[RMDB]
RNA sequence: GGGAACGACUCGAGUAGAGUCGAAAAGAGAGCUACUCUUGAAGUUCUCACUUGGACCAGAACAGUUCGGGCAAUGGACCAUUUAUGUUUAUUCUUGAAGCAGUAAAGGGACCAACUUUUGUGCACCGGUGUAUUAGCUGUUCGCAGCUAAUACACCAAAAGAAACAACAACAACAAC
Reactivity to 2A3 in 0.01 (KOAc 150mM, MgCl2 10mM, bicine 150mM(pH8.5), 24C), signal-to-noise 2, nucleotides 027 to 126: g070a000g000a000g010c010u030a010c000u010c000u010u010g030a060a030g000u000u000c000u000c000a020c030u020u090g020g000a030c000c060a040g040a090a050c050a050g040u090u070c020g050g000g000c040a050a090u040g010g010a030c020c020a080u010u130u050a130u070g130u000u090u030a180u130u110c050u050u110g040a050a010g090c040a020g030u120a010a040a100g000g020g020a030c030c030a050a040c060u160u150u130u110g100u080g030c090a070c090c100
Reactivity to DMS in 0.01 (KOAc 150mM, MgCl2 10mM, bicine 150mM(pH8.5), 24C), signal-to-noise 2, nucleotides 027 to 126: g000a140g010a160g000c010u000a040c020u000c000u010u000g020a090a300g010u000u010c010u000c010a090c100u000u000g000g020a210c050c010a040g000a140a050c040a080g000u000u010c050g000g000g030c060a030a130u030g000g030a130c010c070a120u000u000u010a050u000g010u000u000u010a070u020u010c070u000u000g000a070a100g000c040a010g020u010a020a050a090g000g000g030a100c040c060a050a110c160u000u000u010u000g020u000g000c060a050c200c140